Structure probing data (DMS and 2A3) for a 177-nucleotide construct. 2A3 adducts were read by reverse transcription with SuperScript II with manganese. Source: RMDB library TTRDEL, as collected in RNAgym. 2A3 is a SHAPE reagent: it acylates the 2'-hydroxyl of flexible nucleotides of all four kinds. The RNA was probed in 150 mM KOAc, 10 mM MgCl2 and 150 mM bicine (pH 8.5) at 24 C. Reactivities are given for positions 27 through 126. DMS adducts were read by reverse transcription with MarathonRT.
[RMDB]
RNA sequence: GGGAACGACUCGAGUAGAGUCGAAAAGAUAUGGAAGUUGAAAUAUAGGGAGCUCAUUCGGAAACGAAGAGCGACGAUCUAUAUCGUACGCUUCCUAAGUCAAAACCACAUCCUUCGGGAUGUGGAAGGUUUAUUAACGGUUCGCCGUUAAUAAACCAAAAGAAACAACAACAACAAC
Reactivity to DMS in 0.01 (KOAc 150mM, MgCl2 10mM, bicine 150mM(pH8.5), 24C), signal-to-noise 3, nucleotides 027 to 126: g000a030u000a300u010g010g000a020a010g020u000u000g010a170a100a000u000a010u000a000g000g000g000a050g000c000u000c010a180u000u010c000g000g000a110a110a160c020g000a020a040g000a010g020c010g000a020c230g000a030u010c010u010a010u000a000u000c050g000u010a300c290g010c010u000u000c010c000u000a050a120g000u010c030a050a050a070a100c010c010a020c000a000u000c000c000u000u000c190g040g000g020a000u000g020u000g000g000a020a040
Reactivity to 2A3 in 0.01 (KOAc 150mM, MgCl2 10mM, bicine 150mM(pH8.5), 24C), signal-to-noise 2, nucleotides 027 to 126: g020a000u080a020u160g000g010a000a030g000u110u140g010a010a090a010u030a000u010a010g010g020g000a010g020c000u020c060a300u050u000c000g000g030a050a070a070c010g010a020a000g010a000g000c000g030a050c000g000a020u000c010u000a000u000a000u030c030g030u070a000c090g000c010u000u000c010c000u000a160a000g050u000c040a010a010a060a110c010c000a000c000a000u000c020c010u040u130c300g150g000g000a000u010g000u000g000g000a020a030